[RMDB]
RNA sequence: GGGAACGACUCGAGUAGAGUCGAAAAACACCAAAACUGAAAACGGAAGGCAAUCCUUCCACGACGAUACUUACUUUCCUUUGAUCGUCGUUACUACUGGCAUAGCCACAAAGGAGAACAAUCAUGAGCGCGGACACUGACUUCGGUCAGUGUCCAACCUUCCCGAAUCCUUCGGGAUUCGGGAAGGAAAAGAAACAACAACAACAAC
Reactivity to 2A3 in 0.01 (KOAc 150mM, MgCl2 10mM, bicine 150mM(pH8.5), 24C), signal-to-noise 1, nucleotides 027 to 156: a000c050a050c010c020a000a030a120a070c170u210g090a050a040a050a060c070g030g020a010a010g030g010c180a090a100u300c010c000u000u000c000c000a000c050g000a000c000g010a000u110a190c040u070u020a020c000u080u210u020c040c000u020u030u050g040a000u010c010g000u010c010g000u000u090a010c020u030a010c050u030g010g030c050a200u080a100g050c050c000a000c040a030a150a000g000g040a040g010a020a080c050a090a200u070c020a060u180g100a010g140c090g020c020g010g010a000c000a000c000u000g020a000c010u070u030c150g040g000u000c000a000g000u000g000u000c000c000a000a000